Structure probing data (2A3 and DMS) for a 207-nucleotide construct. The reactions ran in a buffer of 150 mM KOAc, 10 mM MgCl2 and 150 mM bicine (pH 8.5), at 24 C.
RNA sequence: GGGAACGACUCGAGUAGAGUCGAAAAAAAAAUGGUGCUGCCGGUAGUAUUUGUAAGAAGUGCUUAAAUGGUACAGGACAGCUUUCGAUUUGGUAGGCCGCACGGUAGACUUUUGCACCUGGGUCACUUGCAGGAGGUAGAGGGAAGGUCUCUGGAACAUCAUUAAAUGAUUCGUCAUUUAAUGAUGAAAAGAAACAACAACAACAAC
Reactivity to 2A3 in 0.01 (KOAc 150mM, MgCl2 10mM, bicine 150mM(pH8.5), 24C), signal-to-noise 4, nucleotides 027 to 156: a010a000a010a000a000u090g030g000u040g020c020u020g010c010c010g060g020u040a050g030u040a100u150u110u140g040u060a060a060g040a100a020g050u030g050c020u090u090a060a080a040u230g030g010u040a030c020a020g030g070a040c010a020g000c000u040u090u080c080g050a140u090u060u120g090g020u020a030g040g000c010c030g050c030a010c000g020g020u060a050g030a100c050u130u110u120u210g030c040a020c000c030u010g060g000g000u040c030a030c060u050u100g010c030a020g020g040a020g030g010u060a030g020a050g050g020g010a050a000g030g000u000c010u000c020u050g040g020a040a030
Reactivity to DMS in 0.01 (KOAc 150mM, MgCl2 10mM, bicine 150mM(pH8.5), 24C), signal-to-noise 2, nucleotides 027 to 156: a010a040a050a100a050u000g000g000u000g030c020u010g010c040c030g010g010u000a090g010u000a040u000u000u050g020u000a120a070g000a090a070g040u000g010c020u000u000a060a050a060u000g010g010u000a030c040a080g020g010a050c040a040g000c050u020u000u000c050g020a130u010u000u020g020g020u000a090g030g030c010c030g020c010a040c040g020g000u000a080g020a060c030u000u000u030u000g020c000a070c000c020u000g000g020g040u000c010a060c030u000u000g020c040a100g010g010a080g000g010u000a050g020a110g000g040g010a060a070g000g010u000c010u000c000u010g000g010a150a110